[RMDB]
Structure probing data (2A3 and DMS) for a 177-nucleotide construct.
2A3 adducts were read by reverse transcription with SuperScript II with manganese.
RNA sequence: GGGAACGACUCGAGUAGAGUCGAAAACGAAUCAUAUUGGUGGACAGGAGCUUUGACGGGACGCUGGGCUUGUCGUUGCUAUGGGUGUUGCGGGGCUGGCGGCGGCCUGACGACGUCCGCGUCCGCCCAACGUGGGGUCUUUCGAGACCCCACGUUGAAAAGAAACAACAACAACAAC
Reactivity to 2A3 in 0.01 (KOAc 150mM, MgCl2 10mM, bicine 150mM(pH8.5), 24C), signal-to-noise 3, nucleotides 027 to 126: c080g110a040a040u300c060a090u240a070u150u160g060g000u060g020g000a030c020a010g010g060a050g090c020u090u160u130g020a030c110g000g000g000a000c000g070c020u070g080g010g060c000u060u180g060u030c020g020u000u050g020c040u100a230u300g090g050g020u110g030u080u060g030c000g010g000g020g040c000u000g060g020c050g010g000c000g010g040c040c020u040g000a030c000g000a000c010g000u000c000c030g010c020g010u000c000c000g040c000c000
Reactivity to DMS in 0.01 (KOAc 150mM, MgCl2 10mM, bicine 150mM(pH8.5), 24C), signal-to-noise 1, nucleotides 027 to 126: c060g070a140a120u070c060a050u050a200u020u040g000g040u030g000g030a010c000a170g000g000a030g000c040u050u000u030g010a060c000g020g010g010a060c040g030c060u050g000g000g010c060u000u040g030u000c000g010u000u000g010c000u000a100u090g000g000g010u000g000u020u010g010c070g000g020g000g000c040u030g000g030c000g000g000c040g000g040c030c010u020g010a080c030g000a100c030g070u010c000c000g010c070g030u000c030c020g010c000c000
The reactions ran in a buffer of 150 mM KOAc, 10 mM MgCl2 and 150 mM bicine (pH 8.5), at 24 C. Values cover nucleotides 27 to 126.